[RMDB]
RNA sequence: GGGAACGACUCGAGUAGAGUCGAAAAUGACCGAUUGUCUGGCCGCUGAGACACAUAGGGAUUGUGAUUUUAAUAAACCACUCAUUGAGUGGCCACUUACUGAGUAUGAUUUUACUGAUUAUAAGGUGAGAAUAAUGUACUUCGGUACAUUAUUCUCAAAAGAAACAACAACAACAAC
Reactivity to DMS in 0.01 (KOAc 150mM, MgCl2 10mM, bicine 150mM(pH8.5), 24C), signal-to-noise 3, nucleotides 027 to 126: u010g010a220c090c030g010a080u010u020g010u000c030u000g010g000c000c010g020c050u000g000a060g010a100c030a060c090a040u010a120g010g000g000a060u010u000g040u000g000a070u000u010u010u000a070a120u000a060a110a140c020c010a020c000u000c020a170u020u010g000a040g020u000g000g000c040c070a100c100u010u000a040c090u000g000a110g010u000a020u010g010a120u010u000u030u010a090c050u000g000a080u000u010a060u010a040a090g010g020u000
Reactivity to 2A3 in 0.01 (KOAc 150mM, MgCl2 10mM, bicine 150mM(pH8.5), 24C), signal-to-noise 3, nucleotides 027 to 126: u040g040a020c030c000g060a080u020u130g030u010c020u020g020g040c000c000g010c050u030g030a010g020a050c000a000c000a070u140a060g050g000g030a050u050u050g050u000g090a110u030u040u030u140a180a190u140a080a100a020c000c000a000c010u020c030a170u060u210g020a010g010u030g000g000c010c000a040c010u050u100a040c000u030g010a000g040u030a040u080g060a060u050u050u100u110a060c020u040g040a070u010u110a080u080a160a070g050g020u040